The record gives the reactivity of an RNA of 177 nucleotides to DMS and 2A3. The RNA was probed in 150 mM KOAc, 10 mM MgCl2 and 150 mM bicine (pH 8.5) at 24 C. The 2A3 profile rests on 948 reads.
[RMDB]
RNA sequence: GGGAACGACUCGAGUAGAGUCGAAAAUUGGAGCAUAACGGCGUACGUUGGAUCAACGACUCGAAAGCGACCAACGUCGGCAGUACCGAAGCGGCGCUAAACGGUUUGCAUGUGGACGGUACGCUACGCAUCACCAGCCAUUCGUGGCUGGUGAUGCAAAAGAAACAACAACAACAAC
Reactivity to DMS in 0.01 (KOAc 150mM, MgCl2 10mM, bicine 150mM(pH8.5), 24C), signal-to-noise 1, nucleotides 027 to 126: u000u000g010g000a050g040c030a150u000a010a090c170g000g080c070g000u000a000c050g000u000u000g000g000a120u140c000a120a230c130g000a100c030u090c070g000a050a170a050g080c140g040a210c000c000a030a080c300g000u010c210g000g090c030a120g030u040a210c000c000g000a120a000g030c180g010g010c010g000c120u130a000a100a080c300g000g000u000u070u000g000c100a000u000g000u000g070g050a300c010g000g000u000a000c010g000c000u000a040c100
Reactivity to 2A3 in 0.01 (KOAc 150mM, MgCl2 10mM, bicine 150mM(pH8.5), 24C), signal-to-noise 3, nucleotides 027 to 126: u070u070g100g010a020g050c060a060u090a180a000c020g020g020c020g080u050a050c010g020u040u060g080g060a070u070c000a060a060c060g090a080c030u020c120g080a160a130a090g020c000g050a090c000c060a040a020c060g100u050c040g020g000c020a020g000u090a030c000c040g000a010a020g000c040g000g000c020g000c000u040a150a080a100c140g040g040u100u040u270g110c150a100u130g010u050g120g070a030c040g010g000u070a070c030g060c020u090a110c020